[RMDB]
An RNA of 177 nucleotides, treated with DMS and 2A3 and read out base by base. DMS adducts were read by reverse transcription with MarathonRT. Conditions: 150 mM KOAc, 10 mM MgCl2 and 150 mM bicine (pH 8.5), 24 C. Values cover nucleotides 27 to 126. The 2A3 profile rests on 18,330 reads.

RNA sequence: GGGAACGACUCGAGUAGAGUCGAAAAGAUAUGGAGGUAGAACUACGUGGUAGGAGCGAAGAACUCGGAAACGAGGGAGCUCCAAACACGCUACCUCCUAAGUCAAAGCAUUCGUUCGCGAAUGCAACCUCCCUAUAUUGUUCGCAAUAUAGGGAGGAAAAGAAACAACAACAACAAC
Reactivity to DMS in 0.01 (KOAc 150mM, MgCl2 10mM, bicine 150mM(pH8.5), 24C), signal-to-noise 5, nucleotides 027 to 126: g010a040u000a300u020g000g010a000g000g010u000a010g020a100a060c130u010a300c020g010u000g000g010u000a300g000g010a010g030c010g000a080a140g000a120a190c010u000c010g000g000a120a040a180c010g020a020g000g010g000a110g010c000u000c000c000a010a060a160c010a010c010g030c020u000a010c010c000u000c000c000u000a000a040g010u010c040a100a080a130g010c000a000u000u000c010g020u010u010c220g010c010g000a010a010u000g010c020a070a090
Reactivity to 2A3 in 0.01 (KOAc 150mM, MgCl2 10mM, bicine 150mM(pH8.5), 24C), signal-to-noise 5, nucleotides 027 to 126: g040a020u090a050u160g000g010a010g000g010u030a000g010a180a100c160u190a040c300g000u010g010g050u100a040g020g000a010g010c020g110a300a030g030a100a040c000u000c020g010g030a080a050a030c010g000a010g000g000g020a010g000c000u000c000c000a000a050a000c000a000c000g000c000u010a000c000c000u000c000c000u000a000a000g000u000c000a030a080a060g000c000a000u010u020c010g040u060u150c290g000c020g200a010a000u010g000c010a010a050